[RMDB]
RNA sequence: GGGAACGACUCGAGUAGAGUCGAAAAGAUAUGGAGCUCUACCCACCGAACUACUCGUCGCUCCUCGGAAACGAGGAAAAGUCGAGCGAGGAGCUCCUAAGUCAAAAGAAGGGCUUCGGCCCUUCAAGAACAUCUUAACGUUCGCGUUAAGAUGUUCAAAAGAAACAACAACAACAAC
Reactivity to DMS in 0.01 (KOAc 150mM, MgCl2 10mM, bicine 150mM(pH8.5), 24C), signal-to-noise 3, nucleotides 027 to 126: g030a100u000a110u000g000g000a050g020c000u000c030u010a130c030c000c070a300c140c040g030a090a080c110u010a160c000u000c000g010u000c000g000c220u000c000c000u000c030g000g010a060a050a110c010g020a030g030g020a020a040a090a120g010u000c000g000a010g010c000g000a100g000g020a040g020c000u000c000c000u000a010a100g010u020c150a140a060a160a170g020a020a000g000g000g020c000u000u010c210g020g010c010c000c010u000u010c010a030a090
Reactivity to 2A3 in 0.01 (KOAc 150mM, MgCl2 10mM, bicine 150mM(pH8.5), 24C), signal-to-noise 1, nucleotides 027 to 126: g050a020u240a090u300g000g020a000g020c020u000c000u110a250c010c000c020a020c030c010g030a040a050c050u210a060c000u260c000g020u000c000g000c080u000c060c000u030c000g000g040a100a060a020c010g000a000g030g000a010a150a040a090g090u070c010g010a010g020c010g040a070g010g000a010g030c000u000c000c000u010a060a000g130u120c080a000a000a000a280g000a000a000g010g000g000c000u060u160c300g080g000c000c000c000u000u010c000a000a000